[RMDB]
RNA sequence: GGGAACGACUCGAGUAGAGUCGAAAAGAUAUGGAUUUCGAAAGCUGAUGACCUCACCGAUACACUGAAUGUAUGUCGGAAACGACAUACGCGUGUAUCGGUGAGCAAGGCUUCGAAAUCCUAAGUCGUACCGCUAGAAGUUCGCUUCUAGCGGUACAAAAGAAACAACAACAACAAC
Reactivity to DMS in 0.01 (KOAc 150mM, MgCl2 10mM, bicine 150mM(pH8.5), 24C), signal-to-noise 2, nucleotides 027 to 126: g030a110u010a300u010g010g010a000u010u000u020c000g020a090a050a130g050c010u000g020a100u010g000a090c300c020u000c000a000c010c000g010a010u000a010c000a000c010u020g040a090a160u010g000u000a010u000g010u000c000g020g000a060a060a170c010g030a020c000a010u000a000c020g000c120g010u000g000u000a000u000c000g000g000u000g000a020g000c040a040a080g020g000c000u000u010c000g000a020a010a010u000c010c000u000a020a070g000u000c130
Reactivity to 2A3 in 0.01 (KOAc 150mM, MgCl2 10mM, bicine 150mM(pH8.5), 24C), signal-to-noise 1, nucleotides 027 to 126: g160a020u110a050u300g020g030a010u020u010u040c040g110a200a130a070g000c020u010g040a300u170g060a300c030c000u000c020a000c000c020g010a000u020a020c030a010c040u280g160a210a180u300g030u010a000u000g000u000c000g060g000a160a100a050c000g000a000c000a000u000a000c000g030c000g000u080g000u020a000u010c000g000g000u000g000a010g020c000a000a000g000g000c000u030u020c010g010a000a000a000u000c010c000u000a080a000g110u000c030
Background: Source: RMDB library TTRINS, as collected in RNAgym. Structure probing data (DMS and 2A3) for a 177-nucleotide construct. DMS adducts were read by reverse transcription with MarathonRT. For 2A3 the reverse transcriptase was SuperScript II with manganese. The reactions ran in a buffer of 150 mM KOAc, 10 mM MgCl2 and 150 mM bicine (pH 8.5), at 24 C.